[RMDB]
RNA sequence: GGGAACGACUCGAGUAGAGUCGAAAAUAAAAGGAGGAGGAGAAAUAUAGCGCGAGAUCGGUCCUCCCACGCGCGUCUCGCGCUGAUAAGCGGAAUAAGAGGAUCAUUAAUAGAUAGCGCGCAAAAACUAUAUUUGUUUCUUCGGAAACAAAUAUAGAAAAGAAACAACAACAACAAC
Reactivity to 2A3 in 0.01 (KOAc 150mM, MgCl2 10mM, bicine 150mM(pH8.5), 24C), signal-to-noise 2, nucleotides 027 to 126: u100a000a080a000a020g020g010a020g010g020a020g040g000a050g080a050a150a010u170a050u090a060g000c020g000c000g030a000g020a040u030c050g000g010u020c000c000u010c020c000c000a020c020g040c000g010c000g090u040c020u050c060g000c010g000c000u000g000a010u020a070a010g040c020g040g050a090a040u100a170a020g010a010g030g020a010u010c020a040u040u240a100a110u020a090g060a050u060a020g020c010g020c000g050c030a070a110a000a000a000
Reactivity to DMS in 0.01 (KOAc 150mM, MgCl2 10mM, bicine 150mM(pH8.5), 24C), signal-to-noise 3, nucleotides 027 to 126: u020a040a110a110a120g020g010a060g010g010a060g000g000a060g000a070a150a090u000a080u000a080g000c020g010c020g010a030g010a040u020c050g010g010u000c040c040u010c010c020c040a080c140g000c030g010c070g010u010c060u010c020g020c000g040c000u000g000a050u000a040a090g010c090g000g000a050a070u010a090a150g000a050g000g010a050u000c050a070u010u010a070a110u020a110g000a060u000a040g020c010g020c010g020c130a060a040a070a050a120